Chemical mapping of a 177-nucleotide RNA with DMS and 2A3. 2A3 adducts were read by reverse transcription with SuperScript II with manganese. Source: RMDB library OK2TST, as collected in RNAgym. Conditions: 150 mM KOAc, 10 mM MgCl2 and 150 mM bicine (pH 8.5), 24 C. For DMS the reverse transcriptase was MarathonRT.
RNA sequence: GGGAACGACUCGAGUAGAGUCGAAAAGCAGCGACCUAACGAGAGGAUUCUCGUGAGGUGACUGGGAUGGUCAGGAUGCGUGGUCGAGGGUCUAGAUCCGGAGCUGGGCGACAAACCACCCGAUAACCGAUGGGAGUGGAUUCGUCCACUCCCAUCGAAAAGAAACAACAACAACAAC
Reactivity to DMS in 0.01 (KOAc 150mM, MgCl2 10mM, bicine 150mM(pH8.5), 24C), signal-to-noise 2, nucleotides 027 to 126: g010c030a010g030c070g000a040c000c000u000a060a000c020g010a010g010a050g020g000a190u020u000c000u000c000g020u000g000a030g010g010u000g000a050c040u010g010g000g030a090u000g000g020u000c100a090g020g000a090u000g000c050g010u000g000g000u000c050g010a300g010g000g040u000c070u010a130g010a090u000c040c000g000g000a140g010c050u000g000g010g020c040g000a080c160a080a110a060c040c000a070c000c010c020g030a110u010a060a160c220
Reactivity to 2A3 in 0.01 (KOAc 150mM, MgCl2 10mM, bicine 150mM(pH8.5), 24C), signal-to-noise 2, nucleotides 027 to 126: g070c060a010g000c020g130a070c040c030u030a040a000c010g000a000g000a030g300g110a210u230u000c010u010c010g000u050g020a010g050g000u040g000a050c090u090g000g000g000a090u090g020g000u020c010a040g050g070a090u100g110c220g070u040g050g040u040c020g040a060g040g000g030u000c040u090a080g020a130u000c040c000g050g000a020g050c030u050g000g070g030c010g000a040c070a010a140a000c010c000a010c000c010c010g020a060u070a140a130c100